The data come from the RNA Mapping Database (RMDB), library OK3TST. This 207-nucleotide RNA was probed chemically with DMS and 2A3. The DMS profile rests on 4,675 reads. Reactivities are given for positions 27 through 156. The 2A3 profile rests on 2,160 reads. The RNA was probed in 150 mM KOAc, 10 mM MgCl2 and 150 mM bicine (pH 8.5) at 24 C.

[RMDB]
RNA sequence: GGGAACGACUCGAGUAGAGUCGAAAAUGCUGUACAGCGCUGAGAUCUGAGUGAUUUGCUUCACAGCAAUAAAAAGUAAAUUGAUUUGGAGAUUCAGAAAUAGCAGAAGAUGUGCAGUCCCAGUGCAGAUGUUUACAGGCUGUGAUGAUGGGUGAGAGCACUAUUAUCCUUUCGAGGAUAAUAGUGCAAAAGAAACAACAACAACAAC
Reactivity to DMS in 0.01 (KOAc 150mM, MgCl2 10mM, bicine 150mM(pH8.5), 24C), signal-to-noise 3, nucleotides 027 to 156: u000g040c000u000g030u000a040c050a070g020c060g020c020u000g020a050g020a180u000c000u000g030a050g080u000g040a040u000u010u000g010c010u010u000c030a300c170a280g020c080a080a120u020a030a120a020a020a050g020u010a000a030a030u000u000g010a080u000u000u000g020g010a030g010a230u000u010c000a030g000a090a080a100u010a090g010c050a120g020a040a080g010a060u010g020u000g020c020a060g000u000c010c010c000a100g020u010g030c020a060g000a060u000g020u000u000u000a090c060a100g000g020c030u020g000u000g000a100u000g000a100u000g010g000g010u000g000a100g020a230
Reactivity to 2A3 in 0.01 (KOAc 150mM, MgCl2 10mM, bicine 150mM(pH8.5), 24C), signal-to-noise 3, nucleotides 027 to 156: u090g000c000u020g000u020a010c000a030g000c050g000c070u020g020a010g000a100u000c000u020g020a020g030u060g020a020u020u040u030g010c010u030u060c090a110c020a110g120c070a050a050u160a150a130a060a020a010g040u070a020a010a050u050u090g090a060u030u040u030g030g010a050g030a080u120u000c010a000g040a030a120a050u160a050g050c020a010g020a090a010g050a120u080g020u020g000c010a000g030u030c010c030c010a020g030u030g010c020a010g000a100u020g040u060u150u130a070c020a030g030g050c030u020g010u020g070a040u030g010a020u040g010g010g030u030g040a070g000a000